RNA sequence: GGGAACGACUCGAGUAGAGUCGAAAAUACUCUUCAGACGCAAAUGGUUUGCCAUUAUCACAAACUAUUUCUUCGGGAUAUCCAAAUCGUGCAAAUAUUUCUCUGAGUUUUGUGAUUAUUAGUUUAAUAGUAGGGAUAGUUUCGACUAUCCCUACUAAAAAGAAACAACAACAACAAC
Reactivity to DMS in 0.01 (KOAc 150mM, MgCl2 10mM, bicine 150mM(pH8.5), 24C), signal-to-noise 2, nucleotides 027 to 126: u000a060c070u000c060u010u010c040a110g000a070c090g060c180a020a050a040u000g010g010u000u000u000g000c090c100a060u010u020a090u010c180a070c010a040a020a010c060u000a070u010u010u000c070u000u000c060g030g000g000a020u000a060u020c020c070a100a110a070u010c100g020u000g000c090a040a070a070u000a040u010u010u000c030u010c030u010g000a140g010u000u000u000u000g020u010g030a070u010u000a070u010u000a080g010u010u010u000a050a120

Conditions: 150 mM KOAc, 10 mM MgCl2 and 150 mM bicine (pH 8.5), 24 C. Chemical mapping of a 177-nucleotide RNA with DMS. The DMS profile rests on 1,333 reads. Reactivities are given for positions 27 through 126. Values are in units of 0.01, from 0 to 300, in steps of 10.